An RNA of 177 nucleotides, treated with 2A3 and DMS and read out base by base. High 2A3 reactivity points to a flexible backbone, as in loops and unpaired stretches. For DMS the reverse transcriptase was MarathonRT.

RNA sequence: GGGAACGACUCGAGUAGAGUCGAAAACCAGGUCCACCCCGACCGCGCUGCCGGUCUCGGGCUGCGGUUCGGGGUCGUCGGUGUCCACGGCCAAGGUCACAUACCAGCGGCCAUCCGGCUCGCGGGAUUGAAUACUGUUCUUCGGAACAGUAUUCAAAAAAGAAACAACAACAACAAC
Reactivity to 2A3 in 0.01 (KOAc 150mM, MgCl2 10mM, bicine 150mM(pH8.5), 24C), signal-to-noise 7, nucleotides 027 to 126: c000c000a000g000g090u020c010c010a010c010c000c000c000g010a010c000c000g000c010g140c300u120g010c010c010g080g120u160c120u140c160g080g000g000c010u030g000c000g030g000u090u140c010g000g000g000g010u000c000g000u000c000g000g030u040g050u030c040c020a050c070g000g010c020c010a050a050g010g010u080c110a050c020a190u230a080c030c000a030g010c010g020g000c010c000a010u010c000c040g020g000c040u050c060g050c040g010g020g020a010
Reactivity to DMS in 0.01 (KOAc 150mM, MgCl2 10mM, bicine 150mM(pH8.5), 24C), signal-to-noise 7, nucleotides 027 to 126: c000c010a130g010g010u010c040c080a120c010c010c000c000g010a030c000c000g020c020g010c140u020g030c010c010g020g010u030c130u010c070g020g010g020c020u030g010c000g000g000u020u020c000g010g010g000g000u000c040g020u010c040g000g000u000g010u020c040c050a090c110g000g020c010c050a070a300g000g000u000c100a100c170a100u030a100c030c020a080g020c240g000g010c000c000a060u020c140c140g010g000c010u020c030g010c020g010g010g000a150